RNA sequence: GGGAACGACUCGAGUAGAGUCGAAAAGCCAGGAAAUGGUAACAGGAGGAAUUUUGGGGCCAGGCAACCACUUGCUAGACAGUCCCUCAUUGACUCCUGGAGAAUAUGGUGACUCUCCAGUCCCCACACACACUCAUCCAUUCGUGGAUGAGUGUGUAAAAGAAACAACAACAACAAC
Reactivity to 2A3 in 0.01 (KOAc 150mM, MgCl2 10mM, bicine 150mM(pH8.5), 24C), signal-to-noise 2, nucleotides 027 to 126: g020c010c010a040g110g070a160a160a240u180g090g000u090a090a050c000a010g000g010a000g000g060a070a050u070u020u090u100g020g010g000g000c020c000a050g000g070c010a020a020c060c070a130c180u090u060g000c010u010a040g030a190c070a010g010u000c000c000c000u000c010a020u010u030g110a110c000u000c010c020u000g010g000a030g010a020a060u200a120u160g070g030u180g010a020c000u000c000u000c020c000a010g020u000c010c010c040c010a010c010
Reactivity to DMS in 0.01 (KOAc 150mM, MgCl2 10mM, bicine 150mM(pH8.5), 24C), signal-to-noise 2, nucleotides 027 to 126: g000c010c000a040g020g020a120a120a090u000g000g000u010a110a110c050a020g010g000a020g000g000a060a020u000u000u000u030g010g000g030g010c010c130a240g010g010c010a020a040c170c220a160c190u000u010g020c000u000a050g020a110c260a090g000u000c000c000c000u000c120a010u000u000g010a160c020u000c050c020u000g000g000a090g000a110a040u000a070u000g030g020u010g000a030c050u000c020u010c040c020a070g010u000c000c000c000c060a040c260